RNA sequence: GGGAACGACUCGAGUAGAGUCGAAAAGCUGUUUUUGGAUUUGACAAAAUUAUCAACAGAGUAAAGUGCAUGCCGAGGAACGGUUUGCCUCGAUAAAAGCCGUAAAAUAAUAGCUGCAAAUAAUAAACAACACUACGCUUUAGCAGCUUAAAAAACUAGUAUCAUAUUGGUUCGCCAAUAUGAUACUAAAAGAAACAACAACAACAAC
Reactivity to DMS in 0.01 (KOAc 150mM, MgCl2 10mM, bicine 150mM(pH8.5), 24C), signal-to-noise 1, nucleotides 027 to 156: g000c010u010g020u000u000u020u000u000g040g000a250u000u000u000g050a180c040a060a110a070a120u000u000a300u000c000a080a130c060a120g000a140g010u000a100a040a100g010u000g000c040a160u000g040c030c000g000a050g000g000a010a050c000g010g000u010u020u000g030c010c030u000c030g010a100u000a090a020a050a090g030c020c080g030u000a060a080a010a040u000a080a120u000a060g030c010u000g050c000a090a100a090u010a070a130u000a050a110a030c000a020a030c090a040c100u000a060c000g000c140u010u000u000a050g010c030a050g000c000u000u000a000a060a030a040a050a140c110u000
Reactivity to 2A3 in 0.01 (KOAc 150mM, MgCl2 10mM, bicine 150mM(pH8.5), 24C), signal-to-noise 5, nucleotides 027 to 156: g010c010u010g050u020u010u010u030u060g110g030a100u040u020u120g030a040c050a040a150a060a080u120u060a090u100c040a020a050c030a050g060a020g070u100a110a090a050g030u060g050c030a020u090g030c020c010g030a030g000g050a040a070c010g020g000u020u020u090g040c000c010u010c010g030a040u110a090a060a000a000g000c010c000g040u040a030a120a020a010u140a040a070u060a070g010c000u020g000c020a110a040a000u100a110a030u120a120a210a040c060a100a020c040a020c090u200a030c050g020c080u070u040u050a010g000c000a000g000c000u030u040a080a100a010a000a000a000c020u020